[RMDB]
RNA sequence: GGGAACGACUCGAGUAGAGUCGAAAAUAACGCUGUUUUGCAAAACCGUGAUAGUGCUGAGCCGAUGAGCCUCUAAUGAAAUUAUAGACUCAUCGGCUCAGGACCAUUGCGGUUGUGCAAAACGGUGUUACAUAGAGUGUUUCGACACUCUAUGUAAAAAAGAAACAACAACAACAAC
Reactivity to DMS in 0.01 (KOAc 150mM, MgCl2 10mM, bicine 150mM(pH8.5), 24C), signal-to-noise 8, nucleotides 027 to 126: u030a040a070c020g010c000u000g000u000u000u000u010g000c000a020a020a010a000c000c000g030u000g000a010u000a030g010u000g010c000u000g000a010g010c000c000g000a010u000g010a010g010c010c010u000c050u000a010a030u010g010a120a080a300u010u000a020u000a020g010a030c000u000c000a000u000c000g000g000c000u000c000a000g000g000a000c000c030a010u000u000g000c010g000g000u000u000g000u000g000c000a000a010a000a000c000g010g010u000g010
Reactivity to 2A3 in 0.01 (KOAc 150mM, MgCl2 10mM, bicine 150mM(pH8.5), 24C), signal-to-noise 3, nucleotides 027 to 126: u120a020a010c010g000c010u010g000u000u000u000u000g000c010a070a000a000a000c000c000g000u010g010a000u010a020g010u080g200c000u000g000a000g000c000c000g000a000u000g000a000g000c030c010u030c020u030a080a080u130g230a160a040a040u150u090a070u030a060g000a020c000u000c000a000u000c000g000g000c000u000c000a000g000g000a000c000c000a000u000u010g000c000g000g000u000u000g000u000g000c000a000a000a000a000c000g000g000u010g010